[RMDB]
RNA sequence: GGGAACGACUCGAGUAGAGUCGAAAAUUGUCACCCAGCGUCGGCAAUAAGCGUUGGGCUGCAACCGAUUCCGGUGUGUACAGCGGAUGGCUGUAGGUCAUCUCGGCGAUCACCGAGCUGGGAUCAACGUGAAGCAGGAGUUCGCUCCUGCUUCACGAAAAGAAACAACAACAACAAC
Reactivity to 2A3 in 0.01 (KOAc 150mM, MgCl2 10mM, bicine 150mM(pH8.5), 24C), signal-to-noise 2, nucleotides 027 to 126: u100u000g150u060c050a060c070c000c000a000g000c000g190u130c010g030g080c070a070a250u140a140a040g010c040g120u150u080g050g120g000c010u000g000c000a060a210c000c000g020a050u100u120c020c000g100g020u050g010u010g030u030a100c000a030g020c050g040g010a060u000g000g000c000u060g110u240a110g040g140u070c000a050u000c050u020c020g150g000c000g030a000u020c000a000c040c000g010a000g010c000u040g010g000g050a000u000c010a000a000
Reactivity to DMS in 0.01 (KOAc 150mM, MgCl2 10mM, bicine 150mM(pH8.5), 24C), signal-to-noise 1, nucleotides 027 to 126: u040u000g000u000c000a160c060c040c000a020g000c050g000u000c000g000g010c140a030a040u030a120a100g010c100g000u000u000g040g000g000c070u000g000c060a170a040c050c000g010a120u040u070c230c090g010g000u000g010u000g080u040a140c170a090g020c000g000g000a030u000g000g000c040u000g020u010a010g040g000u000c000a000u000c010u000c060g000g000c030g020a130u010c120a120c000c000g010a070g000c040u000g010g000g020a250u040c090a030a160